[RMDB]
Conditions: 150 mM KOAc, 10 mM MgCl2 and 150 mM bicine (pH 8.5), 24 C.
The record gives the reactivity of an RNA of 177 nucleotides to 2A3 and DMS.

RNA sequence: GGGAACGACUCGAGUAGAGUCGAAAAAUGAAAAGAACUUUGAAAAGAGAGUUAAAGAGUACCUGAAACUGCUGAAAGGGAACCGAAUCGUUUCCAGUGUCUAUAAUCCGUGGUAUAUUUCAUUGGCCACAUAACGAUUCUUCGGAAUCGUUAUGUGAAAAGAAACAACAACAACAAC
Reactivity to 2A3 in 0.01 (KOAc 150mM, MgCl2 10mM, bicine 150mM(pH8.5), 24C), signal-to-noise 4, nucleotides 027 to 126: a000u060g010a010a030a010a090g090a040a040c060u120u160u110g080a050a080a030a030g150a030g010a010g010u060u130a090a040a000g060a020g040u050a050c000c020u040g040a180a080a050c010u030g010c020u030g050a060a010a120g000g020g010a000a040c040c020g070a060a070u070c060g010u000u010u010c000c000a020g010u000g040u050c040u030a040u070a090a080u040c010c060g010u060g070g000u060a050u040a070u120u070u060c070a080u030u080g070g010c010
Reactivity to DMS in 0.01 (KOAc 150mM, MgCl2 10mM, bicine 150mM(pH8.5), 24C), signal-to-noise 4, nucleotides 027 to 126: a040u010g000a040a050a090a140g000a080a060c030u000u000u000g000a100a060a110a140g000a070g000a040g000u000u010a040a100a100g010a100g010u000a030c040c020u000g000a080a090a060c070u000g010c030u000g010a080a060a080g030g000g000a070a100c050c090g020a020a060u010c050g000u000u000u000c000c000a120g000u010g020u000c040u020a040u020a070a080u020c040c080g040u020g000g000u000a070u010a080u000u010u010c050a070u010u010g010g000c180
In probing experiments dimethyl sulfate is read out at A N1 and C N3, which are open when not base-paired. Source: RMDB libraries RFM100 and RFMREP, as collected in RNAgym.